The record gives the reactivity of an RNA of 177 nucleotides to DMS and 2A3. The DMS profile rests on 1,999 reads. The reactions ran in a buffer of 150 mM KOAc, 10 mM MgCl2 and 150 mM bicine (pH 8.5), at 24 C. Source: RMDB library TTRDES, as collected in RNAgym. 2A3 adducts were read by reverse transcription with SuperScript II with manganese.
RNA sequence: GGGAACGACUCGAGUAGAGUCGAAAAGAUAUGGAGUGUAUACAGCUUUUGACGGAAGACUAUCGGAAACGAUAGGCUUCCGAUAAGCUGUACACUCCUAAGUCAAACGUGGAGUUCGCUCCACGAACGUUCUUCACAGGUUCGCCUGUGAAGAACGAAAAGAAACAACAACAACAAC
Reactivity to DMS in 0.01 (KOAc 150mM, MgCl2 10mM, bicine 150mM(pH8.5), 24C), signal-to-noise 2, nucleotides 027 to 126: g020a010u000a300u010g010g000a040g030u000g010u000a180u000a050c020a020g030c000u000u000u010u020g020a300c190g010g000a010a000g000a020c020u000a000u000c000g000g000a200a110a150c000g010a000u000a000g020g010c000u000u000c000c010g000a020u000a010a010g040c000u000g010u000a030c000a000c000u000c000c000u000a010a080g010u000c030a080a100a220c040g030u000g040g010a020g020u000u000c300g020c000u000c010c000a010c020g010a020a050
Reactivity to 2A3 in 0.01 (KOAc 150mM, MgCl2 10mM, bicine 150mM(pH8.5), 24C), signal-to-noise 2, nucleotides 027 to 126: g040a000u030a040u140g000g010a020g000u000g010u060a060u070a160c020a010g000c040u070u220u300u300g300a130c040g020g010a000a000g010a000c000u010a010u000c010g030g000a060a000a070c010g000a000u000a000g010g000c000u000u040c000c010g000a000u010a000a000g020c000u010g000u010a000c000a000c000u020c000c000u000a020a010g040u000c010a140a020a080c060g000u000g000g000a030g000u060u160c270g190c100u010c010c000a000c000g010a040a010